[RMDB]
This 207-nucleotide RNA was probed chemically with 2A3.
The RNA was probed in 150 mM KOAc, 10 mM MgCl2 and 150 mM bicine (pH 8.5) at 24 C.
RNA sequence: GGGAACGACUCGAGUAGAGUCGAAAAAUUCACUGGGAGUUCUCAGGAGUGGGGGAUGACUAGAAAAUAUACAGAUUUGGCCAGUCAUUUACCUGACUCGCACACUCAUAAUCCCAGCUACUUGGGUGGCGGAGGCAUGAAAAUCGCUUGAACCUGACGAUGCGAAAAUGUUCGCAUUUUCGCAUCGAAAAGAAACAACAACAACAAC
Reactivity to 2A3 in 0.01 (KOAc 150mM, MgCl2 10mM, bicine 150mM(pH8.5), 24C), signal-to-noise 2, nucleotides 027 to 156: a000u120u120c030a000c060u030g010g040g010a060g040u220u090c060u040c120a080g110g000a010g030u010g000g000g000g000g000a000u010g000a000c000u030a010g080a060a030a010a010u190a030u090a080c070a040g180a090u060u060u110g130g000c040c000a000g000u010c000a000u020u050u180a270c030c010u020g100a030c010u000c000g040c000a060c000a040c060u010c050a060u140a200a050u030c060c000c000a030g040c040u030a040c030u090u050g070g000g000u010g010g020c000g040g030a060g000g060c030a020u050g020a010a100a000a000u060c050g000c020u020u100g000a060a030c010c010u020g000a010